This 177-nucleotide RNA was probed chemically with 2A3 and DMS. Values cover nucleotides 27 to 126. The reactions ran in a buffer of 150 mM KOAc, 10 mM MgCl2 and 150 mM bicine (pH 8.5), at 24 C.
RNA sequence: GGGAACGACUCGAGUAGAGUCGAAAAAGACCACACAUACUGGUAACCAUACUAUAGCUACCAAAGGCAAGUUUUUCAUUAUGUCUUGGGACUCAAGGGGAACUUGGAGCUCUGAAAUUUGCAGAGCGCCUUACGAGUGAUUCGUCACUCGUAAGGCAAAAGAAACAACAACAACAAC
Reactivity to 2A3 in 0.01 (KOAc 150mM, MgCl2 10mM, bicine 150mM(pH8.5), 24C), signal-to-noise 1, nucleotides 027 to 126: a000g100a000c030c040a050c030a000c020a070u190a170c030u040g030g000u040a040a010c020c020a050u060a160c060u150a070u040a100g040c010u040a050c010c000a080a040a040g050g000c010a020a010g010u000u070u020u070u010c080a100u000u150a060u160g000u020c030u040u110g170g050g070a010c020u030c100a040a020g000g020g000g000a010a040c000u000u040g060g060a030g010c000u000c000u050g130a200a280a300u190u130u180g030c030a000g000a000g100c030
Reactivity to DMS in 0.01 (KOAc 150mM, MgCl2 10mM, bicine 150mM(pH8.5), 24C), signal-to-noise 2, nucleotides 027 to 126: a030g020a190c020c010a040c220a080c150a150u000a050c090u000g020g020u000a050a060c020c070a050u000a130c170u000a050u000a030g000c030u010a060c030c030a060a050a080g000g000c010a020a020g000u000u000u000u000u000c080a050u000u000a040u010g010u000c000u000u020g000g010g020a060c020u010c270a070a040g020g000g000g000a050a030c130u000u000g010g010a090g010c000u000c010u000g000a050a090a120u000u020u010g040c020a020g000a060g020c000